[RMDB]
RNA sequence: GGGAACGACUCGAGUAGAGUCGAAAAAGAGCUUGUCUCAGUGUAGCAGGACAAGCCGCAGACAAAACCCCUCAGACACUGAGUUAAAGAAGGAAGGGCUUUAUUCAGCCGGGAGCUUUGGCAAGUGUCACGUCUCUAACAACCGAGCUCCCCAAGAGCUAGUCCAUUAGUUCGCUAAUGGACUAGCAAAAGAAACAACAACAACAAC
Reactivity to DMS in 0.01 (KOAc 150mM, MgCl2 10mM, bicine 150mM(pH8.5), 24C), signal-to-noise 1, nucleotides 027 to 156: a060g000a040g000c030u000u000g010u000c000u000c010a080g010u000g040u000a080g040c050a190g000g010a070c010a040a080g010c000c030g010c020a200g000a160c060a040a020a130a130c020c000c000c000u000c050a180g000a090c060a060c020u000g010a070g010u020u000a070a090a120g000a130a130g010g030a100a160g000g030g000c040u000u020u000a130u010u000c100a050g000c000c040g020g000g000a030g020c000u010u000u020g010g030c000a090a170g000u020g000u000c010a130c080g000u000c060u000c020u010a160a130c050a120a070c040c010g000a040g010c020u000c020c010c020c050a030a070g000a180
Reactivity to 2A3 in 0.01 (KOAc 150mM, MgCl2 10mM, bicine 150mM(pH8.5), 24C), signal-to-noise 2, nucleotides 027 to 156: a000g060a020g000c000u000u000g010u000c000u000c070a100g020u100g080u170a090g080c160a020g020g010a000c000a000a000g000c000c010g050c030a120g020a070c040a050a080a070a130c000c000c000c040u010c030a050g010a020c030a010c100u020g020a010g120u050u110a070a070a020g050a020a030g070g040a050a080g050g020g000c000u090u130u040a180u240u100c050a020g020c090c000g000g010g000a040g000c050u110u160u190g030g020c080a090a030g030u010g000u090c030a010c070g110u030c000u000c000u080a120a030c010a020a060c030c000g020a000g010c010u000c000c000c000c010a050a000g040a000

Chemical mapping of a 207-nucleotide RNA with DMS and 2A3.
For DMS, 2,101 sequencing reads were counted.
Reactivities are given for positions 27 through 156.
Source: RMDB library OK3TST, as collected in RNAgym.
The RNA was probed in 150 mM KOAc, 10 mM MgCl2 and 150 mM bicine (pH 8.5) at 24 C.